Structure probing data (DMS and 2A3) for a 177-nucleotide construct. Source: RMDB library VIROID, as collected in RNAgym. DMS adducts were read by reverse transcription with MarathonRT. The reactions ran in a buffer of 150 mM KOAc, 10 mM MgCl2 and 150 mM bicine (pH 8.5), at 24 C.
[RMDB]
RNA sequence: GGGAACGACUCGAGUAGAGUCGAAAAUGGGGCUUAGGACCCCACUCCUGCGAGACAGGAGUAAUCCUAAACAGGGUUUUCACCCUUCCUUUAGUUUCCUUCCUCUCCUGGAGAGGUCUUCUGCCCUGGUAGAUAUAGUCUUCGGACUAUAUCUACCAAAAGAAACAACAACAACAAC
Reactivity to DMS in 0.01 (KOAc 150mM, MgCl2 10mM, bicine 150mM(pH8.5), 24C), signal-to-noise 1, nucleotides 027 to 126: u010g000g020g010g010c000u000u010a000g000g000a030c000c000c070c260a020c000u000c000c000u000g010c150g010a040g020a090c240a010g010g000a020g010u010a010a010u020c240c010u010a000a000a020c230a020g010g000g020u020u000u020u000c230a140c010c000c000u000u000c060c030u010u010u010a000g010u000u000u000c010c010u000u010c040c070u000c010u010c020c030u010g010g000a020g000a110g010g010u000c000u010u000c020u000g010c020c020c010u000
Reactivity to 2A3 in 0.01 (KOAc 150mM, MgCl2 10mM, bicine 150mM(pH8.5), 24C), signal-to-noise 2, nucleotides 027 to 126: u080g000g010g020g000c020u020u030a000g040g030a020c020c020c020c000a020c000u000c000c000u010g010c130g070a050g010a010c230a150g010g000a000g000u010a010a010u030c000c010u010a030a000a070c300a100g000g000g070u090u120u250u280c150a040c020c000c000u000u020c020c000u010u020u000a010g010u010u020u040c020c000u040u090c010c000u020c010u000c020c020u030g020g000a000g000a010g000g000u000c010u030u020c000u030g020c000c000c020u000